Structure probing data (DMS) for a 207-nucleotide construct.

RNA sequence: GGGAACGACUCGAGUAGAGUCGAAAACUCUUGUUAGGUGAAAGUUGAUGGUCGCCGUGUCAGUCCAUGCCUUUGAAAACAGUUCUAUGUAGUAGGGAGUCGACAACCUAUGAGAGUUAGAACUUGCUAUGCCUUGGACUCUUCGGAGUCCAAGGAAACAUAAAAAACGCUUCGGCGUUUUUUAUGUAAAAGAAACAACAACAACAAC
Reactivity to DMS in 0.01 (KOAc 150mM, MgCl2 10mM, bicine 150mM(pH8.5), 24C), signal-to-noise 2, nucleotides 027 to 156: c010u010c020u000u000g010u000u000a070g020g020u000g000a070a040a120g030u000u010g020a120u010g010g010u000c020g030c010c010g010u010g020u030c050a090g010u000c030c010a090u020g000c010c020u000u000u010g000a070a020a030a060c050a060g010u000u000c020u000a030u000g020u000a270g020u000a020g000g010g010a170g020u010c060g000a090c060a060a100c020c000u000a030u010g010a270g060a170g040u010u010a050g010a040a000c020u000u000g030c020u000a090u000g010c000c000u010u000g030g010a040c000u000c000u000u000c280g030g010a030g020u000c000c000a000a000g000g000a000a020
For DMS the reverse transcriptase was MarathonRT. For DMS, 4,137 sequencing reads were counted. The reactions ran in a buffer of 150 mM KOAc, 10 mM MgCl2 and 150 mM bicine (pH 8.5), at 24 C. It was measured as part of the RMDB library M2RFPK.